[RMDB]
RNA sequence: GGGAACGACUCGAGUAGAGUCGAAAAACAACGAUGUUCUUAAUGGUAUCAUUUCUAACGCUAGGAAUGGUUGUAUACCUCUUAGUGUCAUCCCACUGUGUGCUUCAAAUAAACUUCGCGUUGUAAUAACCUGUAAUGUUCGCAUUACAGAAAAGAAACAACAACAACAAC
Reactivity to DMS in 0.01 (KOAc 150mM, MgCl2 10mM, bicine 150mM(pH8.5), 24C), signal-to-noise 6, nucleotides 027 to 129: a050c020a000a030c110g010a050u000g020u030u010c010u020u030a050a060u050g030g030u000a000u030c050a080u030u020u030c080u030a050a030c200g040c100u000a040g000g000a020a000u040g000g050u000u000g000u050a090u050a110c000c000u030c060u030u020a000g020u020g000u050c100a060u000c030c010c000a120c080u030g010u040g000u040g000c030u000u000c120a100a040a130u060a070a080a070c090u030u020c060g030c150g000u060u030g000u000a020a080u050a110a090c150
Reactivity to 2A3 in 0.01 (KOAc 150mM, MgCl2 10mM, bicine 150mM(pH8.5), 24C), signal-to-noise 9, nucleotides 027 to 129: a010c040a020a000c040g070a100u060g020u100u020c030u060u150a140a090u160g040g010u050a040u110c000a020u040u050u020c010u050a100a100c120g040c160u020a000g030g030a050a040u110g030g060u070u120g110u090a060u050a030c000c000u020c020u010u030a020g020u000g050u060c010a040u030c000c020c020a040c010u030g030u000g020u030g100c010u090u140c060a050a110a160u190a060a100a040c050u150u160c100g030c050g070u000u000g010u020a050a060u060a090a040c020